[RMDB]
Notes:
An RNA of 177 nucleotides, treated with DMS and 2A3 and read out base by base.

RNA sequence: GGGAACGACUCGAGUAGAGUCGAAAAUCGAUGACCAAGGCCCGCCUGGCUGGGCAGGUCGAUAAGAUCGUGGCGCGUGCCGAUGCCGAUGCGGUGCGGCGGCGCAAGGAGUAUCAGGCCCAGCGCCGCACUCCCAAUUUUUCGAAAUUGGGAGUGCAAAAGAAACAACAACAACAAC
Reactivity to DMS in 0.01 (KOAc 150mM, MgCl2 10mM, bicine 150mM(pH8.5), 24C), signal-to-noise 4, nucleotides 027 to 126: u040c040g010a050u020g000a090c060c060a100a140g000g010c010c000c030g020c040c020u010g010g030c050u020g010g000g020c000a050g000g000u020c050g020a070u020a060a090g010a070u010c030g010u010g010g000c000g010c020g010u040g010c020c010g000a070u020g010c000c020g010a190u030g000c050g020g010u010g010c020g000g000c000g010g010c000g000c010a040a040g000g000a060g000u020a040u010c050a120g000g010c000c000c000a040g000c010g000c170c090
Reactivity to 2A3 in 0.01 (KOAc 150mM, MgCl2 10mM, bicine 150mM(pH8.5), 24C), signal-to-noise 9, nucleotides 027 to 126: u090c030g020a040u120g060a040c030c040a030a030g080g010c000c010c000g020c020c040u050g080g000c010u030g010g010g000c010a010g010g040u020c020g000a030u050a060a070g070a090u040c050g100u140g090g010c030g000c050g090u110g000c000c000g090a150u060g010c020c020g090a190u250g190c140g010g010u030g020c020g030g000c010g010g000c000g000c010a030a040g080g020a040g030u120a040u120c060a050g080g000c010c000c000a020g000c000g000c020c040
The reactions ran in a buffer of 150 mM KOAc, 10 mM MgCl2 and 150 mM bicine (pH 8.5), at 24 C.
For 2A3, 14,693 sequencing reads were counted.
In probing experiments dimethyl sulfate is read out at A N1 and C N3, which are open when not base-paired.
For DMS the reverse transcriptase was MarathonRT.
Source: RMDB library OK1LIB, as collected in RNAgym.
Values are in units of 0.01, from 0 to 300, in steps of 10.
The DMS profile rests on 13,276 reads.